[RMDB]
RNA sequence: GGGAACGACUCGAGUAGAGUCGAAAAAUGCUGUAAUUCGUUACAGCAUAAUGAACUCAGAAGUCAAACGCCGUAGCGCCGAUGGUAGUGUGGGGUCUCCCCGAAGGUCACUUUUCGAAGUGACCAAGAUCUCGUGUAGUUUCGACUACACGAGAUCAAAAGAAACAACAACAACAAC
Reactivity to 2A3 in 0.01 (KOAc 150mM, MgCl2 10mM, bicine 150mM(pH8.5), 24C), signal-to-noise 2, nucleotides 027 to 126: a020u010g000c010u010g010u010a010a020u040u090c170g040u050u010a000c010a000g000c000a010u010a000a070u010g010a020a000c010u020c030a020g050a170a020g100u050c030a130a000a050c020g000c020c010g120u070a030g030c020g000c070c010g030a030u040g030g040u040a070g040u050g040u060g070g030g030g000u000c020u010c030c000c010c000g070a150a040g000g010u000c000a010c000u030u050u030u120c160g130a010a000g000u000g010a000c000c010a000a020
Reactivity to DMS in 0.01 (KOAc 150mM, MgCl2 10mM, bicine 150mM(pH8.5), 24C), signal-to-noise 2, nucleotides 027 to 126: a020u000g000c000u000g010u000a000a040u010u020c220g040u000u000a020c000a010g000c000a010u000a030a060u000g000a070a080c020u000c020a080g000a110a160g010u030c040a020a050a200c230g000c020c020g010u010a110g020c060g000c010c020g000a160u010g000g010u000a050g000u000g040u000g020g010g000g000u000c030u010c040c020c000c180g000a060a080g000g000u010c000a000c010u000u000u000u010c190g040a000a010g030u000g010a000c010c010a050a040